[RMDB]
RNA sequence: GGGAACGACUCGAGUAGAGUCGAAAAGAACCGAGAACGGUAAGACGCGCUAUGGCAAAAGCUGCAAUAGAUCAUACGCCGCAAGUGGCAAGACGGCGAGCGCGCAAAGCGGUAUGAAAGAGAAGAACAGCGUAGGCAUAUUCGUAUGCCUACGCUGAAAAGAAACAACAACAACAAC
Reactivity to DMS in 0.01 (KOAc 150mM, MgCl2 10mM, bicine 150mM(pH8.5), 24C), signal-to-noise 1, nucleotides 027 to 126: g000a090a080c000c070g000a120g030a120a080c280g030g070u000a130a030g020a000c010g000c000g000c010u000a050u030g000g000c080a060a030a140a040g030c000u000g050c100a050a000u000a010g010a060u010c140a030u010a170c010g000c050c050g130c220a070a210g000u010g000g000c000a070a030g000a080c090g000g000c000g010a060g040c050g000c000g000c090a020a130a120g010c000g000g030u000a000u040g010a010a010a020g010a080g000a070a180g030a010a020
Reactivity to 2A3 in 0.01 (KOAc 150mM, MgCl2 10mM, bicine 150mM(pH8.5), 24C), signal-to-noise 1, nucleotides 027 to 126: g000a100a070c030c020g000a000g030a140a120c050g020g000u060a070a040g100a000c030g010c000g000c010u000a000u020g060g000c030a040a040a040a030g070c070u020g000c000a000a060u020a070g050a060u040c000a000u080a020c000g000c010c010g050c040a090a000g090u180g100g010c020a000a040g140a050c000g000g060c000g030a010g000c030g000c000g070c060a010a010a010g130c070g030g000u090a010u280g090a090a000a050g070a010g000a070a070g020a150a030